[RMDB]
RNA sequence: GGGAACGACUCGAGUAGAGUCGAAAAGAAACGCGUUGAACUGAAAGGCAGCGCUCGGAAGUCGCCGGUGACACCGUAUUCGCUCGCACCGAAGAGCAGUGACAGAGAUACGUGGGAGUUCAACGUCGGCCUUGCUACCGCUGUAAUUCGUCGAAUAUAUACAUUUCACGUUCGCGUGAAAUGUAUAAAAAGAAACAACAACAACAAC
Reactivity to 2A3 in 0.01 (KOAc 150mM, MgCl2 10mM, bicine 150mM(pH8.5), 24C), signal-to-noise 3, nucleotides 027 to 156: g040a030a070a010c050g010c000g010u010u030g020a040a050c050u020g020a070a040a030g130g010c050a000g040c030g000c040u020c040g050g060a120a030g040u080c060g000c080c010g030g030u040g030a020c000a040c070c030g000u030a130u020u120c070g030c020u010c030g000c020a070c030c060g070a160a100g020a020g060c080a020g030u010g060a030c020a020g030a000g000a030u070a050c040g000u110g010g050g030a080g030u050u000c030a030a010c010g030u040c010g010g010c000c000u000u080g030c030u030a050c000c060g040c060u040g020u090a100a140u080u060c020g040u020c030g090a140a000u110a000
Reactivity to DMS in 0.01 (KOAc 150mM, MgCl2 10mM, bicine 150mM(pH8.5), 24C), signal-to-noise 2, nucleotides 027 to 156: g000a120a090a030c090g040c030g020u000u010g030a100a160c030u010g010a080a090a190g040g010c040a060g010c010g020c060u020c060g020g000a140a160g030u020c040g040c010c060g010g030u000g050a210c050a110c040c070g040u000a050u000u010c000g040c060u000c120g010c020a170c010c000g020a160a210g020a110g020c040a080g010u010g020a120c060a040g030a080g000a040u010a040c050g010u000g030g020g010a120g050u000u000c010a040a000c000g030u000c000g010g000c050c050u000u000g010c030u000a040c050c040g040c010u000g010u000a000a210u000u000c060g020u000c060g000a040a130u010a220
An RNA of 207 nucleotides, treated with 2A3 and DMS and read out base by base. For DMS, 2,390 sequencing reads were counted. For DMS the reverse transcriptase was MarathonRT. It was measured as part of the RMDB library OK3TST. For 2A3 the reverse transcriptase was SuperScript II with manganese.